[RMDB]
RNA sequence: GGGAACGACUCGAGUAGAGUCGAAAAGGCAGUCGAAGGGUCGAAUGUCGGAGUGUGUCUUCUUGCGCUGGCGCAGGUUACUUUUGUCAGCAAAAGUCUUGGCACAGAUGUCGCACGGGUAAGGUCGAGGUGGAGGAUAGUUCGCUAUCCUCCACCUAAAAGAAACAACAACAACAAC
Reactivity to 2A3 in 0.01 (KOAc 150mM, MgCl2 10mM, bicine 150mM(pH8.5), 24C), signal-to-noise 3, nucleotides 027 to 126: g060g010c060a020g040u040c040g050a080a050g020g050g000u090c050g070a150a070u070g020u040c030g060g020a090g030u100g000u000g000u000c010u000u000c000u020u040g010c000g000c020u020g000g000c040g000c050a020g000g060u140u060a120c050u030u070u070u100g020u000c010a020g000c000a030a000a000a060g030u060c080u120u060g040g000c000a020c010a040g020a020u120g020u020c000g000c040a030c030g070g000g000u050a060a030g060g020u060c090g060
Reactivity to DMS in 0.01 (KOAc 150mM, MgCl2 10mM, bicine 150mM(pH8.5), 24C), signal-to-noise 2, nucleotides 027 to 126: g030g020c020a040g070u000c030g000a150a080g000g040g020u000c060g010a070a120u050g000u000c030g020g000a150g010u000g010u010g040u000c040u030u030c030u000u000g040c290g030c040u000g000g010c020g000c180a000g000g000u030u090a050c090u010u010u000u000g000u000c010a050g030c030a000a200a000a000g000u000c100u020u020g020g020c040a030c050a010g010a110u020g000u000c030g000c010a000c080g020g000g010u020a030a080g010g000u000c060g000